[RMDB]
The data come from the RNA Mapping Database (RMDB), library RFM100. Chemical mapping of a 177-nucleotide RNA with 2A3. For 2A3 the reverse transcriptase was SuperScript II with manganese. Reactivities are given for positions 27 through 126.
RNA sequence: GGGAACGACUCGAGUAGAGUCGAAAAGAACUUGCCGAUAGAAUUUGCAAAUGUGUCAAGUGCAUCAAGGAGAAGAUAGAGGAGAAACUCGAUUAGGCAAACAAGCCAAAAGGCAAGGAUACCCCUUGAACUUGGGUGAUUUCGAUCACCCAAGUUCAAAAGAAACAACAACAACAAC
Reactivity to 2A3 in 0.01 (KOAc 150mM, MgCl2 10mM, bicine 150mM(pH8.5), 24C), signal-to-noise 1, nucleotides 027 to 126: g000a020a000c000u000u000g000c100c040g080a070u110a130g020a040a200u130u000u000g020c050a050a000a130u130g130u000g000u070c220a000a130g120u150g000c000a140u040c000a000a110g170g110a000g110a200a000g120a060u300a170g150a000g000g200a090g000a000a150a000c000u000c000g000a140u020u030a000g000g000c000a080a080a080c130a290a000g000c080c000a000a000a190a000g000g000c020a000a000g000g000a000u000a060c000c000c130c000u010u000